[RMDB]
RNA sequence: GGGAACGACUCGAGUAGAGUCGAAAACUCUCGGAGGAGGUGCCAGAGGAUUCAGUGCACUCACUUUCCAGAAGAUUGUGGGCACAGGCCAGGCUCCAGACUUCCAGGCCGACGCUGUGUACGGGGAAGUCACCUUAGGAUUCGUCCUAAGGUGACUAAAAGAAACAACAACAACAAC
Reactivity to DMS in 0.01 (KOAc 150mM, MgCl2 10mM, bicine 150mM(pH8.5), 24C), signal-to-noise 3, nucleotides 027 to 126: c050u010c020u000c090g000g000a030g020g010a210g000g000u000g000c020c030a140g010a130g010g010a070u010u010c070a070g020u000g010c060a090c060u000c010a050c010u000u000u000c000c000a220g020a140a270g010a010u000u010g000u000g010g000g020c010a030c040a060g010g010c030c020a140g000g000c030u000c000c010a080g010a130c060u000u020c020c050a160g000g000c040c010g010a090c080g010c070u020g020u010g020u000a080c090g010g000g030g020a150
Reactivity to 2A3 in 0.01 (KOAc 150mM, MgCl2 10mM, bicine 150mM(pH8.5), 24C), signal-to-noise 2, nucleotides 027 to 126: c010u010c010u000c050g030g020a040g000g040a030g050g010u010g020c020c000a060g050a070g170g020a020u250u120c080a040g010u020g080c040a040c120u110c020a010c010u000u040u000c020c000a070g040a130a030g010a120u060u080g000u030g050g030g010c020a000c020a070g080g000c020c000a020g000g000c000u000c000c000a030g080a110c030u110u100c010c010a010g030g050c000c010g070a060c030g000c090u060g010u050g010u250a080c030g000g000g010g080a030

Chemical mapping of a 177-nucleotide RNA with DMS and 2A3. Reactivities are given for positions 27 through 126. For DMS the reverse transcriptase was MarathonRT. The RNA was probed in 150 mM KOAc, 10 mM MgCl2 and 150 mM bicine (pH 8.5) at 24 C.